[RMDB]
RNA sequence: GGGAACGACUCGAGUAGAGUCGAAAAUCAACGUUCGGCUGUCCGGUAUCAACUCGGUCUACAGCCGGUGGGUUCGUCUCGUGACCCCGAACAUGCUCCCGAGGCUUGACGGCAAGAUCGUCGAGAACCGCAAGUCGGUGCUCUCUCUCCUGCAGGGCCUUACUCUUACAUUCGUGUAAGAGUAAGGAAAAGAAACAACAACAACAAC
Reactivity to 2A3 in 0.01 (KOAc 150mM, MgCl2 10mM, bicine 150mM(pH8.5), 24C), signal-to-noise 4, nucleotides 027 to 156: u110c020a050a060c080g120u120u090c000g040g000c000u020g020u030c010c000g050g040u180a190u270c090a130a070c070u080c130g010g050u050c160u190a020c040a020g000c030c010g000g000u050g020g000g000u050u100c050g040u000c100u050c150g090u150g040a040c000c010c000c020g010a050a010c030a130u110g030c010u030c030c020c010g010a060g030g000c000u020u050g020a030c020g010g000c020a060a090g050a230u060c020g010u010c050g020a010g010a080a060c010c000g020c090a120a020g110u220c030g020g020u050g040c000u000c000u000c000u000c000u020c050c020u040g030c070a090g020g010g000
Reactivity to DMS in 0.01 (KOAc 150mM, MgCl2 10mM, bicine 150mM(pH8.5), 24C), signal-to-noise 2, nucleotides 027 to 156: u000c030a090a050c090g000u000u020c060g010g040c010u000g000u010c030c000g030g010u000a210u010c150a080a120c070u000c000g020g010u000c000u010a130c020a070g020c020c000g000g010u010g000g010g010u010u000c040g020u030c050u000c070g010u010g020a170c040c070c000c020g020a050a050c050a100u000g020c020u010c070c020c010g010a130g030g010c000u000u010g010a090c000g000g040c040a150a090g000a150u000c010g000u000c030g020a100g020a060a060c030c010g040c030a100a200g020u000c010g030g020u000g000c020u000c030u000c010u000c030u000c030c040u000g010c050a120g040g000g030
The record gives the reactivity of an RNA of 207 nucleotides to 2A3 and DMS. DMS adducts were read by reverse transcription with MarathonRT.